Background
An RNA of 177 nucleotides, treated with 2A3 and read out base by base. The 2A3 profile rests on 391 reads. The RNA was probed in 150 mM KOAc, 10 mM MgCl2 and 150 mM bicine (pH 8.5) at 24 C. Values cover nucleotides 27 to 126.
[RMDB]
RNA sequence: GGGAACGACUCGAGUAGAGUCGAAAAUACAUUUGUAUAUGAUCCUGAUCCACUAGCAGAUUAUGAGAUUGCACACCUAGAUUAUCUCUCCUACCAAGCUAAAAUUGGAAGUACAGAUUACUACUCAUGCUCAUGCCUCUUUCGAGAGGCAUGAGCAAAAAGAAACAACAACAACAAC
Reactivity to 2A3 in 0.01 (KOAc 150mM, MgCl2 10mM, bicine 150mM(pH8.5), 24C), signal-to-noise 1, nucleotides 027 to 126: u030a000c070a140u090u090u300g050u010a030u030a010u300g190a110u000c000c000u000g000a010u000c000c000a000c000u000a000g000c100a000g000a140u100u120a150u300g050a000g090a100u290u000g000c000a010c000a000c030c000u020a010g000a110u100u050a040u090c000u000c000u000c000c000u010a000c000c040a000a000g000c000u250a140a180a090a000u080u000g000g000a040a190g000u020a110c110a080g080a000u120u120a030c000u000a000c000u050c000a030